Structure probing data (2A3 and DMS) for a 207-nucleotide construct. DMS adducts were read by reverse transcription with MarathonRT. The data come from the RNA Mapping Database (RMDB), library PDB130. Reactivities are given for positions 27 through 156. For DMS, 2,206 sequencing reads were counted. For 2A3 the reverse transcriptase was SuperScript II with manganese.
RNA sequence: GGGAACGACUCGAGUAGAGUCGAAAAAUACAUAAAAACGUUAGGUCAAGGUGUAACCUAUGAAAUGGGAAGAAAUGGGCUACAUUCUCUACACCAAGAGAAUCAAGCACGAAAGUUAUUAUGAAACCAAUAACCAAAGGAGGAUUUAGCAGUAAACGGUAGUUUCAUUGUUCGCAAUGAAACUACCAAAAGAAACAACAACAACAAC
Reactivity to 2A3 in 0.01 (KOAc 150mM, MgCl2 10mM, bicine 150mM(pH8.5), 24C), signal-to-noise 3, nucleotides 027 to 156: a010u110a010c050a010u210a050a130a020a050a020c060g070u090u060a060g000g000u010c020a040a000g010g000u030g010u040a050a080c010c010u030a060u090g090a020a060a070u070g000g000g010a030a060g020a010a070a030u080g020g040g000c000u010a000c010a020u040u000c000u000c000u050a020c070a060c070c020a030a000g010a000g000a010a030u030c030a060a000g040c000a010c050g050a040a020a000g020u030u000a020u050u060a130u170g070a030a010a010c030c000a010a050u040a050a010c050c070a040a010a040g040g000a010g000g000a010u040u040u040a010g000c000a010g030u150a110a030a010c030
Reactivity to DMS in 0.01 (KOAc 150mM, MgCl2 10mM, bicine 150mM(pH8.5), 24C), signal-to-noise 2, nucleotides 027 to 156: a100u020a060c070a090u010a050a080a100a080a070c090g000u010u000a070g040g000u020c040a090a030g020g070u000g020u000a080a070c020c050u000a010u000g010a100a100a100u010g010g000g010a100a100g010a050a100a120u020g020g010g020c030u000a040c080a050u000u000c010u000c020u000a100c130a180c160c090a120a040g000a040g000a060a020u010c110a040a070g020c030a000c040g000a010a010a100g010u010u000a010u000u010a080u020g010a070a090a060c070c060a090a070u000a040a090c040c050a030a060a110g000g000a020g040g000a060u010u000u000a020g020c020a000g000u000a080a020a070c100